An RNA of 177 nucleotides, treated with DMS and 2A3 and read out base by base.
RNA sequence: GGGAACGACUCGAGUAGAGUCGAAAAAUUCAUAAGCGAGAGCCAUUCACUGGAACUUUGGGCUCUCAAAGACAAAAAAUUCGAUGUCAAACUGAAACCAAUAGGAUCAGCUCUCUCUGAGAAGAACUAAGAGAUCUAGUUUCGACUAGAUCUCUUAAAAAGAAACAACAACAACAAC
Reactivity to DMS in 0.01 (KOAc 150mM, MgCl2 10mM, bicine 150mM(pH8.5), 24C), signal-to-noise 2, nucleotides 027 to 126: a110u010u000c060a090u020a170a050g020c130g010a010g020a010g020c030c060a100u010u000c090a080c250u010g000g000a110a050c110u020u020u010g010g010g050c080u000c010u000c050a020a070a130g000a060c070a010a020a110a100a040a120u000u000c020g000a070u010g030u010c040a050a080a140c050u010g010a040a010a150c010c050a040a090u000a050g020g000a110u000c090a060g000c020u020c020u020c030u000c020u000g010a140g000a030a040g010a060a140c250
Reactivity to 2A3 in 0.01 (KOAc 150mM, MgCl2 10mM, bicine 150mM(pH8.5), 24C), signal-to-noise 1, nucleotides 027 to 126: a000u150u060c050a070u110a130a020g080c020g000a000g010a000g000c030c000a060u110u100c050a060c140u130g080g050a070a000c020u010u060u120g180g000g000c000u040c060u020c060a000a000a000g080a020c060a000a140a030a000a090a140u190u230c100g050a110u030g050u080c080a120a100a000c040u040g030a110a030a040c050c050a050a140u100a150g050g050a060u000c010a000g050c000u000c000u000c010u000c030u050g030a000g020a150a000g040a020a010c030

High DMS reactivity at an A or C suggests that its Watson-Crick edge is free.